[RMDB]
Overview: Source: RMDB library OK2TRN, as collected in RNAgym. The record gives the reactivity of an RNA of 177 nucleotides to DMS and 2A3. DMS adducts were read by reverse transcription with MarathonRT. For 2A3, 866 sequencing reads were counted.
RNA sequence: GGGAACGACUCGAGUAGAGUCGAAAAAAACAGGAACUCAGGAAGCAAUCAUGAUGAAUGAGGGGCCUGGCCUCAUUGUCUGGAUGUGAUAAUCUGGUGAAUUUCAGUUUGAUACUUUUUGAGAGGCCAUCUAAGAGCCAUUCGUGGCUCUUAGAUGAAAAGAAACAACAACAACAAC
Reactivity to DMS in 0.01 (KOAc 150mM, MgCl2 10mM, bicine 150mM(pH8.5), 24C), signal-to-noise 3, nucleotides 027 to 126: a030a030a050c060a060g010g000a160a100c020u010c000a020g000g010a080a070g000c040a100a050u010c060a040u010g010a060u000g010a150a040u010g000a030g010g010g010g030c040c060u000g000g020c000c010u000c000a030u000u010g000u000c010u000g000g010a040u000g010u010g020a150u010a080a040u000c020u010g010g010u000g010a090a110u000u000u000c020a050g000u000u010u010g000a060u000a090c030u000u000u000u010u000g000a080g000a070g010g010c110
Reactivity to 2A3 in 0.01 (KOAc 150mM, MgCl2 10mM, bicine 150mM(pH8.5), 24C), signal-to-noise 1, nucleotides 027 to 126: a040a040a000c090a000g010g010a050a030c010u000c030a000g000g030a070a000g000c040a120a020u090c020a050u100g080a000u050g080a060a020u000g000a020g000g020g010g060c020c090u000g060g050c000c000u050c010a050u030u080g030u070c000u010g040g010a040u050g020u030g070a040u040a180a030u040c020u030g000g060u050g090a110a140u060u040u130c010a030g060u020u070u120g040a030u060a090c010u040u010u090u060u090g070a080g000a010g060g020c000